[RMDB]
RNA sequence: GGGAACGACUCGAGUAGAGUCGAAAAGUCGGACCGCGGGGAGGUGGAGAUGCCAUGCCGACCCGAAGAGGAAAGAAGGACUCGGACGCGAACCCGUGAGUGGAACCUUGGUCUUUUAUUGGGGGGUGAGCUAGGCUCUUCGGAGCCUAGAAAAGAAACAACAACAACAAC
Reactivity to DMS in 0.01 (KOAc 150mM, MgCl2 10mM, bicine 150mM(pH8.5), 24C), signal-to-noise 4, nucleotides 027 to 129: g050u050c040g020g010a010c030c020g000c060g000g070g010g000a110g000g090u040g020g020a060g010a080u070g050c000c090a080u050g020c000c000g000a100c070c020c100g020a080a040g020a070g000g000a050a050a020g030a090a000g040g020a060c100u000c150g020g000a040c080g030c020g000a020a040c040c030c030g000u000g010a010g050u030g020g020a000a000c060c040u000u000g030g010u020c000u060u050u000u030a120u030u010g010g010g010g000g010g020u000g000a050g000
Reactivity to 2A3 in 0.01 (KOAc 150mM, MgCl2 10mM, bicine 150mM(pH8.5), 24C), signal-to-noise 5, nucleotides 027 to 129: g020u000c000g000g010a020c020c000g000c020g010g020g000g000a030g000g000u080g030g010a080g030a060u190g060c030c010a060u110g020c000c020g010a040c000c000c040g010a040a010g050a010g030g020a020a010a010g040a010a020g010g000a020c010u000c040g040g020a040c040g020c020g020a070a070c000c000c000g020u050g050a020g020u040g020g040a030a030c010c000u020u090g070g000u080c020u060u130u040u070a210u110u090g010g000g020g000g010g010u050g000a010g000
About this RNA:
Conditions: 150 mM KOAc, 10 mM MgCl2 and 150 mM bicine (pH 8.5), 24 C. Chemical mapping of a 170-nucleotide RNA with DMS and 2A3. For DMS, 22,973 sequencing reads were counted. For 2A3, 10,155 sequencing reads were counted.